[RMDB]
RNA sequence: GGGAACGACUCGAGUAGAGUCGAAAAACGUGACGGCUACGGCCGUCACGAAGGCAACACGAACGGUCGUUCGGUCAAUGAGUAAGUCCCCCAUUUCAGGGGAACUCCUGGCAUACGUGCCAGGAGAGAAGUGGCGACUAUUCGUAGUCGCCACUUCAAAAGAAACAACAACAACAAC
Reactivity to DMS in 0.01 (KOAc 150mM, MgCl2 10mM, bicine 150mM(pH8.5), 24C), signal-to-noise 1, nucleotides 027 to 126: a160c000g040u000g030a060c000g060g000c000u060a140c200g100g060c000c040g000u000c000a000c000g010a030a150g000g040c000a000a300c150a100c000g000a060a160c300g000g000u000c000g000u000u000c000g010g080u000c040a000a210u000g090a110g000u030a040a100g090u000c000c000c080c000c050a280u000u000u000c300a220g010g000g000g030a030a010c010u000c010c000u000g000g010c000a080u000a040c300g000u100g000c000c010a000g180g000a000g010a000
Reactivity to 2A3 in 0.01 (KOAc 150mM, MgCl2 10mM, bicine 150mM(pH8.5), 24C), signal-to-noise 2, nucleotides 027 to 126: a020c000g020u000g000a000c000g010g020c000u040a090c280g170g000c020c010g000u000c000a000c010g000a010a020g000g010c020a060a030c000a040c030g160a260a010c000g050g080u040c030g000u020u010c000g000g060u150c050a070a060u260g020a050g120u190a150a040g060u070c000c050c000c000c090a130u070u230u200c130a020g000g010g000g000a000a010c000u000c000c010u010g000g040c000a000u000a040c240g080u000g000c020c000a000g020g010a000g000a000